Chemical mapping of a 207-nucleotide RNA with 2A3. Source: RMDB library OK3TST, as collected in RNAgym. For 2A3, 505 sequencing reads were counted.
RNA sequence: GGGAACGACUCGAGUAGAGUCGAAAAUGCGUCCAGCUUUGCGAGUGUGAUGGUUUAAUUACCCUCUGUGGUGUCUGCACGCUCUGCUAAGUCUUGUGUGGGGGAACGGUUAGAAAUAGCCGCAGAGGCAAGGAUUUAGAAGCUGGUGUGCCGUGAAGAUUUAGGGCAUCUUCGGAUGCCCUAAAUCAAAAGAAACAACAACAACAAC
Reactivity to 2A3 in 0.01 (KOAc 150mM, MgCl2 10mM, bicine 150mM(pH8.5), 24C), signal-to-noise 1, nucleotides 027 to 156: u120g010c000g000u000c020c020a020g030c000u100u090u160g050c050g020a020g000u060g000u030g060a160u130g000g130u140u180u220a060a070u110u120a060c000c060c060u040c230u300g170u300g020g000u050g010u040c030u100g000c000a030c020g020c010u000c010u000g000c000u020a010a000g000u000c050u080u090g060u000g000u160g030g010g010g010g010a050a040c010g000g000u050u050a010g020a040a090a130u010a030g000c000c020g040c040a030g030a050g170g030c000a030a040g000g000a010u000u010u070a070g000a020a000g040c040u010g010g010u040g010u040g000c030c020g040u030g070a160a140